[RMDB]
RNA sequence: GGGAACGACUCGAGUAGAGUCGAAAAAUUAAUACGCAGGAUGCAAAUCCCUACUGGCGCCGACGCCACAAUCUUGCGGUUGAAUUGCUCAUUCUCUUCCAACUGGAACGCAUUCACUUCCGCAGGCCAUAAUGCAAGGGUUCGCCCUUGCAUUAUGAAAAGAAACAACAACAACAAC
Reactivity to DMS in 0.01 (KOAc 150mM, MgCl2 10mM, bicine 150mM(pH8.5), 24C), signal-to-noise 3, nucleotides 027 to 126: a090u000u000a060a060u020a130c100g020c110a040g010g000a040u000g000c130a050a140a090u000c010c010c020u010a140c170u010g010g000c010g010c090c210g000a130c070g030c020c030a050c180a070a060u000c020u000u010g010c010g000g000u010u000g000a010a020u000u010g010c000u000c140a190u000u000c030u010c090u020u010c070c070a090a110c140u000g000g000a040a050c220g020c030a010u000u010c080a040c160u000u010c030c020g000c030a060g010g000c300
Reactivity to 2A3 in 0.01 (KOAc 150mM, MgCl2 10mM, bicine 150mM(pH8.5), 24C), signal-to-noise 3, nucleotides 027 to 126: a010u100u070a030a110u140a080c110g000c060a040g030g160a070u120g000c050a060a050a180u040c000c010c000u080a100c100u000g000g010c030g000c100c120g150a120c050g000c030c000a010c040a010a080u020c020u040u030g000c010g000g010u000u030g020a030a030u090u120g000c010u030c080a080u150u010c110u010c000u200u060c050c030a160a140c180u070g000g010a030a020c040g000c000a000u000u040c020a000c050u090u020c000c000g000c000a000g000g070c050